[RMDB]
RNA sequence: GGGAACGACUCGAGUAGAGUCGAAAAUAUGGGCAGUUCGCUGCCCAUACGAGCGGACUCCGGCACUAUGAGCCCGCAGCGUUGGUGCGUAGCCGCGGUGCAGAGACCAAGCCUUCGGGCUUGGUAAUCGCCCAUUAUAGUUCGCUAUAAUGGGCGAAAAAGAAACAACAACAACAAC
Reactivity to 2A3 in 0.01 (KOAc 150mM, MgCl2 10mM, bicine 150mM(pH8.5), 24C), signal-to-noise 2, nucleotides 027 to 126: u080a020u000g000g000g020c000a010g010u030u090c140g070c130u000g010c000c000c000a000u000a000c010g020a060g300c040g000g050a050c000u030c040c010g110g040c070a020c030u120a110u240g050a020g020c050c030c020g000c000a010g050c020g050u150u300g070g000u080g010c050g090u130a010g000c020c020g000c040g030g050u060g000c050a030g060a000g000a130c000c000a000a000g000c010c000u060u100c190g050g000g000c000u010u000g000g000u000a000a040
Reactivity to DMS in 0.01 (KOAc 150mM, MgCl2 10mM, bicine 150mM(pH8.5), 24C), signal-to-noise 3, nucleotides 027 to 126: u010a010u010g000g010g030c010a010g010u000u000c220g050c010u000g000c000c010c000a000u000a000c060g000a120g020c020g020g000a110c010u000c040c050g030g010c050a060c060u000a090u010g000a110g020c000c050c020g030c040a050g010c040g000u000u000g010g010u010g010c120g010u000a130g000c010c020g000c090g000g000u000g000c030a130g000a180g000a030c000c000a010a010g000c000c000u000u000c190g030g010g000c000u010u010g000g010u000a000a030
Chemical mapping of a 177-nucleotide RNA with 2A3 and DMS. For 2A3 the reverse transcriptase was SuperScript II with manganese. Conditions: 150 mM KOAc, 10 mM MgCl2 and 150 mM bicine (pH 8.5), 24 C. For DMS the reverse transcriptase was MarathonRT.